Structure probing data (2A3 and DMS) for a 177-nucleotide construct.
Conditions: 150 mM KOAc, 10 mM MgCl2 and 150 mM bicine (pH 8.5), 24 C.

[RMDB]
RNA sequence: GGGAACGACUCGAGUAGAGUCGAAAAGGAGUCGCAGCGAAAGCAAGUCCGAACAGGGCGCAAUAAGUCGCAGGUACUGGACCCGAAGCGGAGGUGACCUACCCUUGGCCAGGUUGAAGCAUGGGUACAUUAACCCGUCAUUCGUGACGGGUUAAUGAAAAGAAACAACAACAACAAC
Reactivity to 2A3 in 0.01 (KOAc 150mM, MgCl2 10mM, bicine 150mM(pH8.5), 24C), signal-to-noise 5, nucleotides 027 to 126: g060g020a030g020u050c010g010c050a010g010c030g040a040a020a000g040c040a080a020g060u000c000c010g020a050a040c110a110g010g040g000c050g000c050a030a100u170a220a030g050u050c020g000c070a020g060g000u050a060c020u050g020g010a060c010c010c020g030a080a000g000c010g040g030a050g020g040u050g050a060c000c020u050a050c000c000c000u040u140g130g000c020c000a050g080g010u020u050g050a050a020g000c020a060u060g000g000g030u020a020
Reactivity to DMS in 0.01 (KOAc 150mM, MgCl2 10mM, bicine 150mM(pH8.5), 24C), signal-to-noise 6, nucleotides 027 to 126: g020g010a080g000u000c050g020c080a120g010c030g020a100a090a090g010c070a110a110g010u000c010c010g000a110a050c130a150g000g000g010c030g010c090a050a090u040a110a070g010u010c030g020c050a090g000g000u010a040c080u010g000g010a110c030c020c020g010a110a100g010c050g010g000a070g010g000u010g000a050c030c050u000a080c040c020c040u010u020g020g000c010c030a030g020g010u010u010g010a110a110g000c050a050u000g000g000g010u010a090

For 2A3 the reverse transcriptase was SuperScript II with manganese. Source: RMDB libraries RFM100 and RFMREP, as collected in RNAgym.